[RMDB]
RNA sequence: GGGAACGACUCGAGUAGAGUCGAAAACCUUGCAGUCACGUGAUGAAAAGACACAGGUGACACUGAUCCGGAUUUGGUAGUUGACAAAUCCUCCAUGCCGAGAUUAGUUUCAUUUUGCGUCUUUUGACCUAUUGCUAGCAUUCGUGCUAGCAAUAGGAAAAGAAACAACAACAACAAC
Reactivity to DMS in 0.01 (KOAc 150mM, MgCl2 10mM, bicine 150mM(pH8.5), 24C), signal-to-noise 4, nucleotides 027 to 126: c010c010u010u010g020c080a060g030u000c040a070c160g020u020g010a140u010g010a050a010a010a000g000a000c000a030c000a020g010g000u000g000a020c050a020c010u000g000a010u000c000c000g000g000a110u000u000u000g010g030u020a030g010u020u010g010a220c300a100a110a080u020c120c020u000c020c000a010u010g010c020c000g000a140g010a000u000u000a020g000u000u000u000c010a000u000u010u020u000g020c070g000u000c000u000u000u000u000g010a150
Reactivity to 2A3 in 0.01 (KOAc 150mM, MgCl2 10mM, bicine 150mM(pH8.5), 24C), signal-to-noise 8, nucleotides 027 to 126: c000c000u010u150g100c070a060g040u090c040a030c150g100u120g090a130u040g040a030a010a000a010g010a000c000a000c010a020g000g000u000g000a000c000a000c020u000g000a000u000c010c000g070g140a270u010u020u030g040g040u180a030g010u040u150g080a100c070a050a130a050u090c000c000u020c000c010a020u030g020c000c000g280a300g000a170u000u000a000g000u010u000u000c020a030u000u160u280u030g000c000g000u000c000u000u010u010u040g080a030